This 207-nucleotide RNA was probed chemically with DMS and 2A3. For 2A3, 3,042 sequencing reads were counted. Values are in units of 0.01, from 0 to 300, in steps of 10. 2A3 adducts were read by reverse transcription with SuperScript II with manganese. For DMS, 6,011 sequencing reads were counted.
RNA sequence: GGGAACGACUCGAGUAGAGUCGAAAACUUUCUCAAAACAGGAUUCUGUGUUCAACUGAGUGUGGGAAAUUCAAAGGAACUUAAACAAGUCUCUUUGCAUCAGGACUUAUCAGAGCCUUGAAUAUACUAAUGGAGAUCCUGAAGCUCCAAGGGAAAGUAACAGAGUUGUUUUCGAACAACUCUGUUAAAAAGAAACAACAACAACAAC
Reactivity to DMS in 0.01 (KOAc 150mM, MgCl2 10mM, bicine 150mM(pH8.5), 24C), signal-to-noise 3, nucleotides 027 to 156: c020u010u000u000c010u000c010a100a090a110a180c040a060g010g000a100u000u000c030u010g010u000g020u000u000c040a080a130c040u010g000a080g030u000g030u000g030g000g010a080a090a100u010u000c020a020a060a080g020g020a050a060c030u000u000a090a070a160c140a030a030g010u010c010u000c010u010u000u000g020c120a110u000c060a070g020g010a070c010u010u000a070u000c150a140g000a060g030c020c030u000u010g010a040a110u000a120u000a090c070u000a040a130u000g010g000a070g000a090u000c050c020u000g010a070a140g010c030u010c020c000a080a100g010g020g000a070a060a170g010
Reactivity to 2A3 in 0.01 (KOAc 150mM, MgCl2 10mM, bicine 150mM(pH8.5), 24C), signal-to-noise 4, nucleotides 027 to 156: c010u000u030u000c010u000c000a080a070a040a040c030a020g030g030a120u120u050c030u080g060u030g050u100u060c030a080a050c060u070g030a020g070u080g010u090g030g050g040a040a100a090u060u050c040a050a060a040g050g010a050a020c040u080u100a140a100a060c080a080a030g010u000c030u010c010u130u090u120g040c020a050u090c030a020g020g040a040c000u070u060a040u130c050a030g030a010g080c010c000u010u030g000a040a000u080a010u030a110c050u070a040a100u070g010g010a020g000a040u020c020c030u040g030a050a010g050c010u030c060c040a050a030g020g000g020a010a070a010g020